RNA sequence: GGGAACGACUCGAGUAGAGUCGAAAACGCACGUCCGCACGCCACAGACGGUAGGCCGCUUCCCACUGACGCGGGCGAGUACCCAUGAACGACUCGAACCGGCCGUGGCGAUCCAUCGCCGCCGUGCAGGGGAUGUGAGAUUCGUCUCACAUCCCCUAAAAGAAACAACAACAACAAC
Reactivity to DMS in 0.01 (KOAc 150mM, MgCl2 10mM, bicine 150mM(pH8.5), 24C), signal-to-noise 2, nucleotides 027 to 126: c190g000c000a060c090g000u000c000c210g000c040a160c010g000c040c020a060c060a060g000a040c050g000g000u000a250g000g000c000c040g000c050u000u010c000c080c060a050c120u040g000a060c040g000c010g000g030g000c000g000a060g040u000a090c100c010c080a100u010g000a100a110c080g000a000c020u000c020g000a300a130c020c000g000g000c000c020g050u010g000g050c030g030a040u090c110c130a150u020c060g000c000c040g000c120c040g000u000g000c000
Reactivity to 2A3 in 0.01 (KOAc 150mM, MgCl2 10mM, bicine 150mM(pH8.5), 24C), signal-to-noise 5, nucleotides 027 to 126: c070g030c010a020c010g020u010c010c030g000c020a030c050g040c000c010a060c010a060g070a050c020g050g010u040a050g120g060c010c000g010c050u060u040c030c040c040a070c150u170g030a040c060g000c050g030g020g010c010g010a000g030u180a210c010c040c080a080u180g060a100a060c120g050a040c020u000c030g060a150a090c030c000g020g020c020c000g010u010g000g020c020g010a060u090c070c030a090u090c020g030c020c000g020c010c010g010u030g000c010
The record gives the reactivity of an RNA of 177 nucleotides to DMS and 2A3. In probing experiments dimethyl sulfate is read out at A N1 and C N3, which are open when not base-paired. The 2A3 profile rests on 3,205 reads. DMS adducts were read by reverse transcription with MarathonRT. The RNA was probed in 150 mM KOAc, 10 mM MgCl2 and 150 mM bicine (pH 8.5) at 24 C. Values cover nucleotides 27 to 126.